[RMDB]
RNA sequence: GGGAACGACUCGAGUAGAGUCGAAAAGAUAUGGAGAAGGCACGAGGAACCCUGUAUCGGAAACGAUACAGAUCUCUACCCACCGUGCUUCUCCUAAGUCAAACCUGCAAAGUUCGCUUUGCAGGAACUCUCAUUGAGACUUCGGUCUCAAUGAGAGAAAAGAAACAACAACAACAAC
Reactivity to 2A3 in 0.01 (KOAc 150mM, MgCl2 10mM, bicine 150mM(pH8.5), 24C), signal-to-noise 1, nucleotides 027 to 126: g000a020u030a010u070g000g000a020g000a030a000g270g110c020a000c010g170a280g170g090a150a100c000c050c040u000g010u000a000u000c000g000g010a020a020a010c000g000a010u010a000c000a000g000a020u020c050u010c060u160a180c070c030c060a060c060c030g000u000g010c000u020u010c000u000c000c000u000a030a000g010u000c060a090a080a120c000c000u010g020c020a000a000a000g000u120u190c220g010c170u020u000u010g030c010a000g000g000a000a000
Reactivity to DMS in 0.01 (KOAc 150mM, MgCl2 10mM, bicine 150mM(pH8.5), 24C), signal-to-noise 1, nucleotides 027 to 126: g000a010u000a300u010g000g000a030g020a050a000g000g030c020a000c020g040a080g020g000a130a150c260c120c020u010g010u000a000u000c000g000g000a090a040a090c000g030a000u020a020c000a000g000a020u020c200u040c120u010a100c100c100c040a190c050c010g010u010g000c010u000u000c020u010c000c000u000a000a010g040u000c000a100a100a190c010c020u000g000c000a020a020a020g020u000u020c230g030c030u000u000u000g020c000a020g000g000a030a020